[RMDB]
RNA sequence: GGGAACGACUCGAGUAGAGUCGAAAAGCAGACACUACCAGCAACAACAGCACGAAAAGCACUAACACACAUCAUGCAAGAACUGCACGGUAAAAACGUCAGACUCAUCGGCGAAGUCACUACGAGAUUCUACAACCGCAACGACACAGCAACAACAGUGAACACAAAGAUUCGUCUUUGUGUUCACAAAAGAAACAACAACAACAAC
Reactivity to DMS in 0.01 (KOAc 150mM, MgCl2 10mM, bicine 150mM(pH8.5), 24C), signal-to-noise 2, nucleotides 027 to 156: g010c050a070g020a080c050a080c080u000a050c020c040a030g020c040a040a100c020a080a060c050a140g000c040a110c030g000a020a050a090a090g000c020a020c100u000a070a050c090a060c060a110c110a070u000c060a050u010g040c030a120a080g020a110a220c090u000g000c020a070c020g000g020u000a030a090a050a060a050c020g000u000c110a090g010a100c050u000c040a080u000c030g040g020c030g000a050a040g030u010c020a080c050u000a080c040g000a070g010a060u000u000c050u000a020c050a010a000c050c020g000c040a030a080c020g030a080c040a150c050a060g040c000a050a080c020a040a080c110a150
Reactivity to 2A3 in 0.01 (KOAc 150mM, MgCl2 10mM, bicine 150mM(pH8.5), 24C), signal-to-noise 6, nucleotides 027 to 156: g020c020a000g030a040c010a000c050u090a050c030c000a000g040c020a020a040c010a020a010c000a040g030c030a010c110g100a040a070a040a030g050c040a020c100u130a170a000c050a010c020a010c010a120u060c010a010u080g000c020a050a050g020a120a050c020u020g000c080a010c030g000g030u100a030a010a030a050a020c020g020u020c010a010g020a100c020u020c050a050u060c070g020g000c020g020a030a010g040u040c020a010c070u070a040c030g020a010g020a110u070u020c000u040a020c010a030a030c000c020g040c020a040a020c030g020a010c030a000c000a060g060c010a020a050c010a020a010c010a070